Structure probing data (2A3) for a 207-nucleotide construct.
2A3 adducts were read by reverse transcription with SuperScript II with manganese.
The reactions ran in a buffer of 150 mM KOAc, 10 mM MgCl2 and 150 mM bicine (pH 8.5), at 24 C.
2A3 is a SHAPE reagent: it acylates the 2'-hydroxyl of flexible nucleotides of all four kinds.

RNA sequence: GGGAACGACUCGAGUAGAGUCGAAAAAACAAAUUUAUUUCUCGCAGUGCUGGAGGCUGGGAAGUUCAAGAUCAAGGCACUGGCAUCUGGUGAGGGACUUCGUCCUACAUCCUCACAUAUUGGAAGGCUGAAGAGCAAGAGAGGAACUCUCUCCACAACCGUAUGAGGAUUUCGAUCCUCAUACGGUAAAAGAAACAACAACAACAAC
Reactivity to 2A3 in 0.01 (KOAc 150mM, MgCl2 10mM, bicine 150mM(pH8.5), 24C), signal-to-noise 1, nucleotides 027 to 156: a000a010c290a160a090a010u270u180u090a190u080u060u000c040u010c000g070c030a080g000u040g070c030u030g000g030a010g000g040c000u000g040g000g050a000a120g070u120u110c030a020a010g010a050u050c030a040a060g030g000c000a000c030u010g000g020c030a010u030c080u120g040g000u000g010a040g020g010g000a000c060u140u040c250g020u020c030c000u050a020c000a050u000c010c000u020c010a040c030a010u110a030u070u140g010g050a040a030g020g020c070u010g010a040a000g020a010g000c010a160a000g060a000g000a000g060g000a040a020c050u000c000u000c000u050c180c000a040c010a100